An RNA of 177 nucleotides, treated with 2A3 and DMS and read out base by base.
The 2A3 profile rests on 1,205 reads.
Values cover nucleotides 27 to 126.
DMS adducts were read by reverse transcription with MarathonRT.
[RMDB]
RNA sequence: GGGAACGACUCGAGUAGAGUCGAAAACAUGCUCAGGUUCCGGUAGCUCAAUAAUCGCACUGUAACCACGGAUAAUACCGGCGCGCUCCAACAGCCGAACGCGCUCCAAACAGGGGCGGGCGGUCAACCAUCUAUCGUGCUUCGGCACGAUAGAUGGAAAAGAAACAACAACAACAAC
Reactivity to 2A3 in 0.01 (KOAc 150mM, MgCl2 10mM, bicine 150mM(pH8.5), 24C), signal-to-noise 2, nucleotides 027 to 126: c020a060u150g040c040u010c060a070g010g010u000u020c010c010g020g010u100a060g040c030u050c100a120a150u170a190a100u150c110g030c020a010c020u000g010u070a050a030c030c000a020c040g050g000a070u030a170a090u060a170c020c030g080g000c050g000c030g000c020u050c030c000a170a160c040a060g000c000c000g080a080a040c020g030c020g020c170u070c040c030a140a240a220c090a200g020g030g020g000c000g060g000g000c000g000g020u050c060a080a090
Reactivity to DMS in 0.01 (KOAc 150mM, MgCl2 10mM, bicine 150mM(pH8.5), 24C), signal-to-noise 1, nucleotides 027 to 126: c070a080u020g000c010u000c050a080g010g010u000u000c110c000g000g000u000a070g030c020u000c200a070a210u000a070a040u040c110g050c040a180c040u000g030u020a000a200c030c010a030c120g000g050a100u030a050a040u050a200c050c020g020g040c090g010c040g020c020u000c000c070a060a150c140a120g030c070c020g020a030a050c050g020c000g030c000u000c000c030a070a040a180c240a190g020g000g040g000c000g020g000g010c010g000g030u000c150a090a050